[RMDB]
Conditions: 150 mM KOAc, 10 mM MgCl2 and 150 mM bicine (pH 8.5), 24 C. This 177-nucleotide RNA was probed chemically with 2A3 and DMS. For DMS the reverse transcriptase was MarathonRT. Values are in units of 0.01, from 0 to 300, in steps of 10. Source: RMDB library OK1LIB, as collected in RNAgym.
RNA sequence: GGGAACGACUCGAGUAGAGUCGAAAAUAUAUUAUUUUCAAAGCUUUCAUGAGAACCAUCUAUCAUUAUUGAUGUAUAUCCACUUCUUAAAGCUUUCAUUGCAAGGUCAAAACUUGAACCAUGGUCCGAUGGUACUAGCAUUCGUGCUAGUACCAUCAAAAGAAACAACAACAACAAC
Reactivity to 2A3 in 0.01 (KOAc 150mM, MgCl2 10mM, bicine 150mM(pH8.5), 24C), signal-to-noise 5, nucleotides 027 to 126: u190a010u060a030u250u090a070u040u140u040u090c050a050a040a000g000c000u020u050u040c060a070u130g020a010g000a060a020c040c020a030u010c010u070a070u080c070a130u130u260a100u150u270g010a000u010g080u090a080u030a070u260c070c030a050c060u070u060c030u040u080a010a010a020g000c000u000u070u070c050a060u020u180g040c050a040a030g020g000u080c060a010a010a090a180c050u020u010g040a030a050c040c040a080u080g100g000u030c060c060
Reactivity to DMS in 0.01 (KOAc 150mM, MgCl2 10mM, bicine 150mM(pH8.5), 24C), signal-to-noise 2, nucleotides 027 to 126: u110a070u040a020u030u000a060u000u000u060u000c000a160a040a040g000c000u050u000u040c060a060u030g010a000g010a120a110c240c030a020u000c000u020a070u000c060a150u040u070a040u020u060g000a030u000g000u000a050u040a050u050c150c150a100c040u010u050c000u000u000a000a010a050g000c050u000u000u000c130a030u020u000g000c020a000a010g030g000u020c230a040a040a060a050c000u000u010g000a090a010c000c100a060u040g000g010u060c000c160